[RMDB]
RNA sequence: GGGAACGACUCGAGUAGAGUCGAAAAUCGCGAUCGACAUGCGCAACAUGCUGACCGUCAGCGAGUGUGUGGCUCGGGCCGCGCUGGAACGCACCGAGAGCCGGGGCGGGCACACCCGCGACGACCAGUGCCUUUUAGGUUUCGACCUAAAAGGCACAAAAGAAACAACAACAACAAC
Reactivity to 2A3 in 0.01 (KOAc 150mM, MgCl2 10mM, bicine 150mM(pH8.5), 24C), signal-to-noise 2, nucleotides 027 to 126: u140c030g000c040g080a060u070c040g110a090c040a070u160g010c060g060c060a030a100c020a050u170g020c010u060g030a050c040c000g030u030c040a040g010c000g000a070g000u070g010u000g010u010g100g000c010u020c030g010g080g010c010c000g020c010g010c030u080g070g110a160a040c080g020c040a070c070c090g090a080g010a010g180c020c000g030g020g030g040c000g000g140g040c000a000c000a010c000c010c000g000c010g000a010c000g000a000c020c060a040
Reactivity to DMS in 0.01 (KOAc 150mM, MgCl2 10mM, bicine 150mM(pH8.5), 24C), signal-to-noise 1, nucleotides 027 to 126: u000c080g010c010g000a000u010c000g040a110c060a010u010g000c000g090c230a120a100c060a070u000g010c000u000g000a050c110c060g000u000c050a060g020c020g000a090g030u000g000u040g030u000g000g000c010u000c020g050g000g000c010c030g120c090g060c070u050g010g030a140a170c040g030c090a080c200c000g050a120g000a060g000c030c000g000g000g000g000c000g000g050g070c000a040c000a060c000c000c000g000c000g010a040c030g000a130c020c050a090